[RMDB]
RNA sequence: GGGAACGACUCGAGUAGAGUCGAAAAGGAAGAGAGUUAGACACGGUUGAUCUCACCCUUCGGGGGGGCUAUAGAGAUCACUGGAAGCACUACCGGACAACCGGAACAUUGCAGCAAUGCAGCCCAAAAAAUCCAAACAUCUUCGGAUGUUUGGAAAGAUACAACAGGUCUUCGGACCUGUUGUAUCAAAAGAAACAACAACAACAAC
Reactivity to 2A3 in 0.01 (KOAc 150mM, MgCl2 10mM, bicine 150mM(pH8.5), 24C), signal-to-noise 1, nucleotides 027 to 156: g040g000a050a020g030a000g000a000g030u100u110a010g040a050c040a000c170g000g020u070u230g010a010u000c000u000c000a020c000c040c000u090u140c300g000g010g010g020g000g020g000c050u040a030u050a210g030a000g000a000u000c000a000c010u000g040g020a020a050g020c020a010c040u030a040c010c010g000g080a130c060a170a120c060c030g020g000a020a040c000a020u080u120g010c000a020g000c020a050a000u030g000c010a020g000c010c010c010a020a130a050a000a050a100u000c000c000a000a010a000c000a000u010c000u020u010c050g150g010a000u000g000u010u000u000g000g000a000a000a000